[RMDB]
RNA sequence: GGGAACGACUCGAGUAGAGUCGAAAAAGCGCAACGAACACACCACAACCACAGACAUGAGACGGCCCCCGCCGGGACGGCAAUCCCAGUGCGAGGGCCUGACCACCGAGGAAGGUAAAGGCUUCCCUCGUCGUGCUUCAUUCGUGAAGCACGACGAAAAAGAAACAACAACAACAAC
Reactivity to DMS in 0.01 (KOAc 150mM, MgCl2 10mM, bicine 150mM(pH8.5), 24C), signal-to-noise 1, nucleotides 027 to 126: a100g000c060g000c000a070a140c090g010a090a120c170a020c070a140c020c000a070c120a140a000c070c040a170c200a050g000a070c250a030u000g000a010g000a100c080g000g000c020c000c000c070c090g000c000c000g000g000g000a000c140g000g000c160a240a300u000c000c000c000a070g000u060g010c150g010a140g050g000g000c000c000u000g000a180c210c130a140c020c000g050a030g070g010a150a000g000g000u020a070a050a080g000g000c000u010u000c000c000c000
Reactivity to 2A3 in 0.01 (KOAc 150mM, MgCl2 10mM, bicine 150mM(pH8.5), 24C), signal-to-noise 1, nucleotides 027 to 126: a000g030c020g030c050a020a020c060g080a130a000c000a000c000a000c000c000a000c000a000a070c000c000a030c000a020g110a010c030a090u090g030a030g020a040c030g000g000c010c000c000c010c000g000c040c000g010g040g000a000c050g190g040c000a010a110u050c030c000c050a050g060u100g100c020g000a020g020g000g000c000c000u010g000a010c000c000a060c000c020g030a040g110g050a060a100g000g080u250a040a030a030g030g000c020u000u000c020c000c010

Annotation
The record gives the reactivity of an RNA of 177 nucleotides to DMS and 2A3. Source: RMDB library RFM100, as collected in RNAgym. The DMS profile rests on 837 reads. Values cover nucleotides 27 to 126.